Structure probing data (2A3 and DMS) for a 177-nucleotide construct. 2A3 adducts were read by reverse transcription with SuperScript II with manganese.
[RMDB]
RNA sequence: GGGAACGACUCGAGUAGAGUCGAAAAGGGAUUGCCUCAGUAACGGCGAGUGAAGCGGCAAAAGCUCAAAUUUGAAAUCUGGCUCCAUGCGGAGCCCGAGUUGUAAUUUGGAGAGGACACUUCGGGUAUUUUCCUUUUUUUUCGAAAAAAGGAAAAUAAAAGAAACAACAACAACAAC
Reactivity to 2A3 in 0.01 (KOAc 150mM, MgCl2 10mM, bicine 150mM(pH8.5), 24C), signal-to-noise 6, nucleotides 027 to 126: g030g000g040a050u010u060g000c010c000u020c010a000g000u030a020a010c020g120g030c150g050a040g020u030g060a040a010g220c000g010g000c000a040a030a030a000g020c010u060c050a020a050a080u100u090u180g080a100a070a040u000c000u000g000g000c000u000c010c010a130u300g140c250g030g000a010g000c000c000c000g010a000g030u030u040g060u100a020a070u040u030u060g040g020a050g010a020g050g020a020c020a010c110u050u080c030g060g020g010u020
Reactivity to DMS in 0.01 (KOAc 150mM, MgCl2 10mM, bicine 150mM(pH8.5), 24C), signal-to-noise 6, nucleotides 027 to 126: g000g000g000a200u010u000g010c040c000u000c010a080g020u000a110a060c050g010g030c160g010a210g010u010g010a120a130g010c300g020g000c020a010a040a070a130g000c020u000c010a020a030a060u000u020u010g010a080a060a080u010c020u010g010g010c000u000c010c010a140u020g020c190g020g000a020g010c000c000c020g000a000g000u010u000g000u000a010a030u000u010u010g010g000a070g000a070g010g000a080c110a060c070u000u010c040g020g010g020u000
The RNA was probed in 150 mM KOAc, 10 mM MgCl2 and 150 mM bicine (pH 8.5) at 24 C. It was measured as part of the RMDB libraries RFM100 and RFMREP. Values cover nucleotides 27 to 126.